RNA sequence: GGGAACGACUCGAGUAGAGUCGAAAAGAUAUGGAGGCAUGGAGGAACUACCUUGGAAGAUUCGGAAACGAAUUGCAGAGGCCUAUGAAGUGCCUCCUAAGUCAAAAUCUCGACUUCGGUCGAGAAAGAAUUCAGUAAUCUUCGGAUUACUGAAUUCAAAAGAAACAACAACAACAAC
Reactivity to DMS in 0.01 (KOAc 150mM, MgCl2 10mM, bicine 150mM(pH8.5), 24C), signal-to-noise 3, nucleotides 027 to 126: g010a060u000a300u010g000g010a050g000g010c020a020u010g000g020a090g010g000a080a010c040u020a300c010c000u000u000g000g020a130a280g000a000u000u000c010g000g000a060a100a160c000g000a010a010u000u020g000c220a240g000a010g000g000c030c100u000a190u020g000a170a190g000u010g000c010c000u000c000c010u000a010a040g000u000c000a090a070a140a150u000c000u010c000g010a010c000u000u010c190g050g000u000c000g000a010g000a010a070a060
Reactivity to 2A3 in 0.01 (KOAc 150mM, MgCl2 10mM, bicine 150mM(pH8.5), 24C), signal-to-noise 3, nucleotides 027 to 126: g010a010u060a040u130g000g000a000g000g020c010a000u030g040g050a020g010g010a060a030c120u210a110c200c030u010u030g120g050a170a060g010a070u020u030c010g000g010a030a110a030c000g010a000a030u030u040g010c040a040g030a010g120g000c000c010u300a300u100g020a040a020g000u000g010c010c010u000c000c000u010a020a010g000u010c010a000a020a030a280u050c000u000c000g000a000c010u050u090c300g080g020u010c000g020a000g060a000a040a000
An RNA of 177 nucleotides, treated with DMS and 2A3 and read out base by base. The 2A3 profile rests on 3,911 reads. For DMS, 2,449 sequencing reads were counted. The RNA was probed in 150 mM KOAc, 10 mM MgCl2 and 150 mM bicine (pH 8.5) at 24 C.